[RMDB]
RNA sequence: GGGAACGACUCGAGUAGAGUCGAAAAUCAGUUCACUUCGGUGAACUGAAAAAUGGCAGCUAUGUGCUAAAGUGUCAUAGCAAAAGAUCGAAAGAUCAAAAAAAACCAUGGACUUCGGUCCAUGGAAUCAUAAACAACAGUUCGCUGUUGUUUAUGAAAAAGAAACAACAACAACAAC
Reactivity to 2A3 in 0.01 (KOAc 150mM, MgCl2 10mM, bicine 150mM(pH8.5), 24C), signal-to-noise 3, nucleotides 027 to 126: u020c000a000g000u010u000c000a010c010u020u060c140g110g000u000g000a000a000c000u000g000a010a010a000a000a000u120g030g020c000a010g000c020u010a000u030g010u040g000c020u130a220a070a130g110u110g080u110c000a010u000a010g000c000a030a060a020a070g000a010u010c010g050a040a040a040g020a020u010c020a020a060a100a000a000a010a020a000c000c000a000u000g000g000a000c000u020u030c220g070g000u000c000c000a000u000g000g000a000a010
Reactivity to DMS in 0.01 (KOAc 150mM, MgCl2 10mM, bicine 150mM(pH8.5), 24C), signal-to-noise 4, nucleotides 027 to 126: u000c020a010g010u000u000c000a010c000u000u010c190g040g010u000g000a010a010c000u010g000a010a020a060a090a120u000g010g010c020a050g010c000u000a010u000g010u000g000c020u000a060a100a130g010u010g020u010c000a000u000a010g010c000a130a070a120a120g000a000u000c000g000a100a070a200g010a010u020c000a000a000a000a080a060a040a120a160c000c010a000u010g000g020a020c000u000u010c190g020g010u000c000c000a000u000g000g000a020a030